[RMDB]
Source: RMDB library OK2TST, as collected in RNAgym. Chemical mapping of a 177-nucleotide RNA with DMS and 2A3. The reactions ran in a buffer of 150 mM KOAc, 10 mM MgCl2 and 150 mM bicine (pH 8.5), at 24 C. The 2A3 profile rests on 2,909 reads.
RNA sequence: GGGAACGACUCGAGUAGAGUCGAAAAGCACUGGCGACGGUAAUUGCCUCGCAGGCGGUUAUCUCUGGCGUCUUUUCAUUGACGCGUCAGGCGGUACGUCUGGGAUAUUUGUCGCCGAUGCGCAUUAGGGCAUUUAAUGAUUCGUCAUUAAAUGCCCAAAAGAAACAACAACAACAAC
Reactivity to DMS in 0.01 (KOAc 150mM, MgCl2 10mM, bicine 150mM(pH8.5), 24C), signal-to-noise 2, nucleotides 027 to 126: g020c010a000c010u000g010g010c020g020a040c020g010g020u010a060a060u020u010g010c120c090u000c140g020c080a040g000g020c000g010g000u010u000a000u000c010u010c020u000g000g000c000g010u000c060u000u010u000u050c270a160u010u000g000a050c110g010c010g010u010c010a020g010g000c110g000g000u000a010c020g020u000c000u010g010g000g000a060u000a060u000u000u020g020u000c010g020c000c000g010a020u000g010c000g000c160a120u010u000a140
Reactivity to 2A3 in 0.01 (KOAc 150mM, MgCl2 10mM, bicine 150mM(pH8.5), 24C), signal-to-noise 3, nucleotides 027 to 126: g010c010a000c060u070g000g020c020g000a020c030g030g050u040a080a120u100u150g110c020c000u010c030g160c030a000g000g000c010g000g070u120u100a010u020c020u000c000u030g050g020c020g020u080c000u070u110u100u130c170a200u080u240g050a030c030g000c000g060u070c000a010g000g060c050g030g020u010a010c010g000u000c010u030g070g060g020a010u030a060u180u090u220g000u000c000g000c000c000g000a000u010g010c030g000c010a040u090u210a100